[RMDB]
RNA sequence: GGGAACGACUCGAGUAGAGUCGAAAAGUGCGACAUUUCGAUGUCGCACAAACCCAAAUGGUGGCACCUAACUAAACAAGCCGGGAAAAGCCAGAUGCCAACGUCCUUAGCCCUUCGGGGCUAAGAAGCCGAUAUAAAGUUUCGACUUUAUAUCGGCAAAAGAAACAACAACAACAAC
Reactivity to DMS in 0.01 (KOAc 150mM, MgCl2 10mM, bicine 150mM(pH8.5), 24C), signal-to-noise 2, nucleotides 027 to 126: g000u000g010c020g010a010c000a010u000u010u020c190g040a020u000g020u000c020g000c000a000c000a000a060a120c020c020c010a080a120a070u020g010g060u010g030g000c050a050c010c020u000a100a140c040u000a090a060a130c080a160a090g040c100c060g010g010g000a070a130a130a060g010c020c060a030g010a030u000g000c050c040a020a080c040g000u000c040c000u000u020a030g010c000c000c000u000u040c130g000g020g000g040c000u010a000a000g000a130a160
Reactivity to 2A3 in 0.01 (KOAc 150mM, MgCl2 10mM, bicine 150mM(pH8.5), 24C), signal-to-noise 2, nucleotides 027 to 126: g000u000g010c000g000a000c010a010u040u020u070c190g130a020u000g000u020c000g000c010a000c000a000a000a000c000c000c000a010a030a050u120g010g010u030g030g010c030a150c100c010u070a140a090c040u120a170a130a130c050a120a010g050c080c070g010g010g000a080a150a010a020g020c030c020a030g020a070u090g050c000c010a030a020c020g030u040c010c000u010u000a000g020c010c000c030u010u050c180g040g000g000g040c010u000a000a000g000a000a030